[RMDB]
RNA sequence: GGGAACGACUCGAGUAGAGUCGAAAAACGGCCGUAUACGUACGGCCGAAAGUGAUGAGGAACCAACGAGAGCUAGUUUGAUGGCUUCGACGCUCUGCUCUGAAAACGCUGCUAUACGUAGCAGCGAUCUAUAACCCCUUUUCGAAGGGGUUAUAGAAAAAGAAACAACAACAACAAC
Reactivity to DMS in 0.01 (KOAc 150mM, MgCl2 10mM, bicine 150mM(pH8.5), 24C), signal-to-noise 9, nucleotides 027 to 126: a130c020g010g000c000c000g020u000a020u010a070c250g030u000a000c000g000g010c000c000g010a000a020a070g020u010g000a100u010g000a090g000g000a100a120c060c050a090a120c080g000a080g000a030g010c020u010a050g010u020u010u020g010a110u010g000g000c030u000u000c040g000a150c170g000c020u000c020u000g000c040u000c030u020g000a080a060a100a140c030g020c000u000g010c000u000a030u010a070c180g030u000a010g010c000a010g000c000g000a020
Reactivity to 2A3 in 0.01 (KOAc 150mM, MgCl2 10mM, bicine 150mM(pH8.5), 24C), signal-to-noise 9, nucleotides 027 to 126: a000c010g000g000c000c000g010u000a020u020a040c280g050u010a000c000g010g000c000c000g000a010a000a000g090u090g050a110u060g030a040g040g050a040a040c040c020a030a030c060g040a020g000a010g120c020u070a080g120u150u110u220g220a210u120g060g000c010u040u040c040g050a040c020g010c020u020c020u030g010c010u010c020u060g040a030a040a040a040c020g000c000u000g000c000u020a020u010a090c250g100u020a020g000c000a000g000c000g000a010